[RMDB]
RNA sequence: GGGAACGACUCGAGUAGAGUCGAAAACAUUCUUGAAAAAGUGAUGUAGAUUGAUAGCCCAUAACUUUUUUGAAUUACAUCGACGAUACGGCGUCGAAAGAAAAAUAAAUAGACCGUAUGAAAGAAAAAAACAACAGUAGCUUCGGCUACUGUUGAAGUAAUACCAGUAGUUCGCUACUGGUAUUACAAAAGAAACAACAACAACAAC
Reactivity to 2A3 in 0.01 (KOAc 150mM, MgCl2 10mM, bicine 150mM(pH8.5), 24C), signal-to-noise 2, nucleotides 027 to 156: c010a030u060u030c020u050u140g000a040a010a010a020a020g040u040g000a030u030g030u070a120g050a180u060u270g030a050u120a080g050c020c000c000a050u140a090a080c110u020u060u000u010u090u090g100a160a080u170u090a090c020a100u020c000g000a000c000g000a000u000a010c000g000g000c010g000u000c010g010a000a000a020g060a000a050a010a040a000u050a020a010a010u060a090g150a020c000c000g000u000a010u030g030a020a070a070g030a030a050a030a010a010a000a000c000a000a000c000a000g000u000a000g010c000u030u030c270g040g000c000u000a000c000u000g000u000u000g000a000a000